[RMDB]
RNA sequence: GGGAACGACUCGAGUAGAGUCGAAAAGUUGAUCUGGACACACUCUCCCUCUCGGGGCCAGAGAAAAAUCACAGCUUCAUUGUGUGGAGGAAGGACAGGUGACCCUGGAAAAGAUGGUAGCCCCCGGCCUUCAAGCCACAUUCGUGUGGCUUGAAGGAAAAGAAACAACAACAACAAC
Reactivity to 2A3 in 0.01 (KOAc 150mM, MgCl2 10mM, bicine 150mM(pH8.5), 24C), signal-to-noise 2, nucleotides 027 to 126: g010u010u050g020a050u070c000u110g040g030a050c030a000c000a000c200u040c080u080c000c000c000u000c000u000c010g100g000g000g000c020c000a000g060a000g030a000a050a000a000a000u150c040a050c000a050g120c000u030u060c050a220u300u070g000u010g070u170g100g050a070g140g000a210a000g030g000a010c010a010g080g000u050g000a090c000c000c070u000g000g050a020a120a010a030g240a070u120g100g000u000a020g000c060c000c000c000c000g040g040
Reactivity to DMS in 0.01 (KOAc 150mM, MgCl2 10mM, bicine 150mM(pH8.5), 24C), signal-to-noise 1, nucleotides 027 to 126: g010u010u040g010a000u020c040u040g010g010a110c050a100c130a130c050u010c000u030c020c000c030u040c100u030c050g000g030g000g000c000c040a120g050a170g010a010a090a060a220a070u030c090a000c150a100g030c090u000u000c080a130u010u050g000u000g060u000g000g000a030g000g000a040a010g000g000a060c100a060g000g020u000g000a090c010c000c000u020g000g020a040a060a090a080g010a050u090g000g000u010a010g010c040c000c000c080c000g000g000

Chemical mapping of a 177-nucleotide RNA with 2A3 and DMS. Source: RMDB library RFM100, as collected in RNAgym.